Description
Structure probing data (DMS and 2A3) for a 177-nucleotide construct. The RNA was probed in 150 mM KOAc, 10 mM MgCl2 and 150 mM bicine (pH 8.5) at 24 C.

RNA sequence: GGGAACGACUCGAGUAGAGUCGAAAAGAUAUGGAUUCACUAGGGAGCUUACAGUCGGAAACGACUGUAGAGCAUCGAUCUAGCGAAUCCUAAGUCAAAGCUGUAACAAGUUCGCUUGUUACAGCAACCAGAAUAACAAGUUCGCUUGUUAUUCUGGAAAAGAAACAACAACAACAAC
Reactivity to DMS in 0.01 (KOAc 150mM, MgCl2 10mM, bicine 150mM(pH8.5), 24C), signal-to-noise 5, nucleotides 027 to 126: g000a000u000a010u010g000g010a020u000u010c000a040c000u000a000g000g010g000a010g040c000u000u000a030c010a010g010u000c000g020g010a000a010a020c010g010a030c000u000g000u000a010g020a030g030c000a300u010c260g010a040u010c000u000a000g000c040g000a010a000u000c000c000u000a000a080g000u000c000a120a120a140g010c010u000g000u010a000a000c000a010a010g020u000u020c270g010c020u000u000g000u000u000a000c000a010g010c010a020a040
Reactivity to 2A3 in 0.01 (KOAc 150mM, MgCl2 10mM, bicine 150mM(pH8.5), 24C), signal-to-noise 5, nucleotides 027 to 126: g010a000u010a000u050g000g010a000u000u010c010a010c030u000a000g000g020g030a050g020c000u000u020a000c000a010g010u000c000g000g000a010a000a000c000g000a000c010u010g000u010a020g030a010g000c000a050u300c040g020a020u000c000u000a000g010c000g010a000a000u000c000c000u000a000a000g000u000c050a120a130a060g000c000u010g000u000a000a010c000a000a010g020u070u110c230g130c240u000u010g000u010u000a000c000a000g000c000a000a010

2A3 adducts were read by reverse transcription with SuperScript II with manganese.